[RMDB]
RNA sequence: GGGAACGACUCGAGUAGAGUCGAAAAUUAGCAAUUUUCUUGGCUGCACUGAUCUUGUCUGAUGAAUUUUUGAGCAGUCCUUCACAUUGGGUAAAGUCAGUCAUCUCUAUCAUUAGCAUGUACAUUACCAUAAGUCUGCUUGGCCAGCAUGAUGAUGCGAGCGUGUGGGAUUCGUCCCACACGCUCGAAAAGAAACAACAACAACAAC
Reactivity to 2A3 in 0.01 (KOAc 150mM, MgCl2 10mM, bicine 150mM(pH8.5), 24C), signal-to-noise 1, nucleotides 027 to 156: u060u020a040g000c010a050a010u110u040u120u110c090u070u080g000g030c000u010g040c190a000c060u050g030a000u020c000u070u040g040u040c040u030g060a060u040g020a180a300u030u210u080u130u160g000a030g000c010a120g130u000c000c000u070u070c070a070c040a140u040u070g010g000g000u040a010a070a000g000u040c060a020g030u000c030a010u010c040u020c020u040a090u040c000a060u000u140a000g030c000a000u010g030u090a020c030a090u130u120a090c160c000a120u070a280a000g030u030c040u010g030c020u010u000g010g030c040c010a000g030c000a000u060g020a040u010g000a010u130g070